[RMDB]
RNA sequence: GGGAACGACUCGAGUAGAGUCGAAAAGAAGAGAAGCGCGCGAAUUGGAAACCAGCGAACCUUAUUACGCGCGCAAGGAACCGGGCCUUGGUUCAUUGGAAAGAAUAGAUAAUUUCGCUGGUAAAGAAUCCUCAUUUACCUUCGGGUAAAUGAGGAUAAAAGAAACAACAACAACAAC
Reactivity to DMS in 0.01 (KOAc 150mM, MgCl2 10mM, bicine 150mM(pH8.5), 24C), signal-to-noise 2, nucleotides 027 to 126: g010a170a170g030a220g020a160a130g000c000g000c030g040c000g000a060a060u000u000g000g000a110a150a100c000c000a000g000c020g000a020a020c090c060u000u000a060u020u000a200c020g030c000g000c020g030c020a000a010g010g010a050a040c030c050g020g000g010c030c050u020u020g010g000u000u000c000a080u000u050g040g020a160a080a070g020a130a120u050a110g000a070u070a090a110u020u020u000c000g000c010u000g030g050u020a070a030a060g000a130
Reactivity to 2A3 in 0.01 (KOAc 150mM, MgCl2 10mM, bicine 150mM(pH8.5), 24C), signal-to-noise 3, nucleotides 027 to 126: g160a070a020g070a030g050a260a000g000c000g000c000g000c000g010a050a060u070u060g070g030a100a060a100c000c020a000g010c000g000a040a010c010c010u030u050a030u080u100a080c000g030c000g000c010g000c000a000a040g100g000a000a000c000c010g040g090g040c040c050u110u180g000g000u000u000c050a020u090u140g050g060a180a080a110g070a060a190u140a120g130a020u120a150a120u140u040u030c000g000c000u000g000g000u000a000a000a000g030a020
An RNA of 177 nucleotides, treated with DMS and 2A3 and read out base by base. The RNA was probed in 150 mM KOAc, 10 mM MgCl2 and 150 mM bicine (pH 8.5) at 24 C. For DMS, 2,148 sequencing reads were counted. Values are in units of 0.01, from 0 to 300, in steps of 10. For 2A3 the reverse transcriptase was SuperScript II with manganese.